Background:
The record gives the reactivity of an RNA of 207 nucleotides to DMS and 2A3. 2A3 adducts were read by reverse transcription with SuperScript II with manganese. The 2A3 profile rests on 3,858 reads. Source: RMDB library OK3TST, as collected in RNAgym. The DMS profile rests on 8,013 reads.
RNA sequence: GGGAACGACUCGAGUAGAGUCGAAAACGACAGGACGGAAAGACCCCAUGGAGCUUUACUGUAGCUUGACAUUGGGUCUUGGUACUACAUGUACAGGAUAGGUGGGAGGCUUUGAAACCAGGACGCCAGUUUUGGCGGAGCCAUCCUUGGGAUACCACCGAUACUAUUAUUUCGAUAAUAGUAUCGGAAAAGAAACAACAACAACAAC
Reactivity to DMS in 0.01 (KOAc 150mM, MgCl2 10mM, bicine 150mM(pH8.5), 24C), signal-to-noise 3, nucleotides 027 to 156: c020g010a070c030a030g020g000a080c010g000g010a110a040a030g000a040c010c010c010c040a080u000g020g010a070g010c000u010u000u020a140c200u010g060u000a030g040c010u000u010g010a180c020a070u010u000g030g030g000u000c000u050u000g010g010u010a010c030u000a080c110a120u010g000u000a050c050a110g020g010a100u000a030g030g020u010g020g010g010a190g010g000c030u010u000u000g000a130a170a080c020c000a020g010g000a110c010g010c070c050a070g010u000u000u000u000g020g010c020g020g000a090g000c040c020a090u000c030c010u000u000g020g010g010a200u000a110c030c050a190
Reactivity to 2A3 in 0.01 (KOAc 150mM, MgCl2 10mM, bicine 150mM(pH8.5), 24C), signal-to-noise 4, nucleotides 027 to 156: c030g040a010c020a040g040g010a010c030g010g020a110a010a010g000a000c000c000c000c000a000u000g000g010a000g010c010u140u110u210a220c130u280g110u230a030g010c000u020u060g110a050c000a000u010u010g000g000g000u000c000u010u010g010g000u030a020c010u050a020c020a180u240g010u030a030c010a010g010g020a030u060a050g030g000u040g030g010g000a020g020g000c010u100u070u090g070a060a040a020c020c000a000g030g010a010c010g030c040c010a060g040u070u110u250u090g020g000c000g000g010a000g010c000c020a050u030c010c000u050u070g030g020g020a060u090a090c020c030a010